[RMDB]
RNA sequence: GGGAACGACUCGAGUAGAGUCGAAAAGGUGGCCAGGUUAAUUGCCUCGGGUACGGUCACAACGUGAAGGAUGUUCCAAUGGGCAAUCCGCAGCCAAGCCCCUACGUGUGGUGUCCGUAAUACAGACAUUCCAUAUGGGGAAGGUUCAGAGACUAAACCAUAUACCUCUGUUCGCAGAGGUAUAUGGAAAAGAAACAACAACAACAAC
Reactivity to DMS in 0.01 (KOAc 150mM, MgCl2 10mM, bicine 150mM(pH8.5), 24C), signal-to-noise 1, nucleotides 027 to 156: g030g070u000g000g000c000c010a080g030g030u010u000a040a120u010u000g040c000c040u000c000g000g020g030u000a120c000g040g010u030c080a030c010a060a130c100g090u000g000a130a100g010g030a130u000g050u000u000c040c000a160a090u020g000g000g000c070a060a120u030c030c000g000c110a100g000c000c000a060a140g020c120c000c000c010u000a020c030g030u000g060u000g020g000u000g010u010c000c020g000u010a140a140u060a300c100a000g050a010c010a030u000u000c020c000a030u000a100u010g010g050g050g050a180a150g000g020u010u010c030a060g010a010g000a300c020u010a080a080a220
Reactivity to 2A3 in 0.01 (KOAc 150mM, MgCl2 10mM, bicine 150mM(pH8.5), 24C), signal-to-noise 2, nucleotides 027 to 156: g110g000u010g020g020c020c030a030g040g000u060u110a060a070u110u090g030c020c010u040c090g070g020g000u090a050c050g050g000u100c040a020c020a070a150c110g040u140g020a100a050g070g000a070u150g080u100u030c020c020a060a040u210g000g000g000c020a020a050u000c020c020g040c020a000g020c000c000a080a070g020c010c000c000c010u090a040c170g000u000g040u070g040g000u000g010u020c020c020g070u040a080a000u130a040c030a010g000a000c000a010u220u070c040c010a020u030a050u280g000g000g000g000a020a020g020g000u100u120c100a010g020a000g020a060c030u120a090a040a040

Structure probing data (DMS and 2A3) for a 207-nucleotide construct.
DMS adducts were read by reverse transcription with MarathonRT.
Reactivities are rounded to 0.1 and cut off at 0 and 3.
The reactions ran in a buffer of 150 mM KOAc, 10 mM MgCl2 and 150 mM bicine (pH 8.5), at 24 C.